[RMDB]
RNA sequence: GGGAACGACUCGAGUAGAGUCGAAAAGCAGACUAACGUCAGACGAUUUAGCAUCGAGUGUAUAUCAUCCUGACGUACACGAUGGACACACGUGGGAGUUGAUUAGAUUUGACAUUAGUCUCGACCGCGCCGUGAGAUCCUUCGGGAUCUCACGGCGAAAAGAAACAACAACAACAAC
Reactivity to 2A3 in 0.01 (KOAc 150mM, MgCl2 10mM, bicine 150mM(pH8.5), 24C), signal-to-noise 2, nucleotides 027 to 126: g100c060a010g000a000c000u000a000a000c000g000u000c000a020g010a000c000g010a020u030u120u170a000g000c000a070u060c010g030a050g040u000g010u040a000u090a140u150c010a020u010c080c000u020g150a110c090g060u080a040c010a000c040g000a000u010g070g040a000c030a000c000a000c060g020u080g040g260g060a160g040u070u100g050a050u060u020a210g200a300u090u030u000g000a010c000a000u020u020a000g040u070c000u000c070g170a050c040c050g000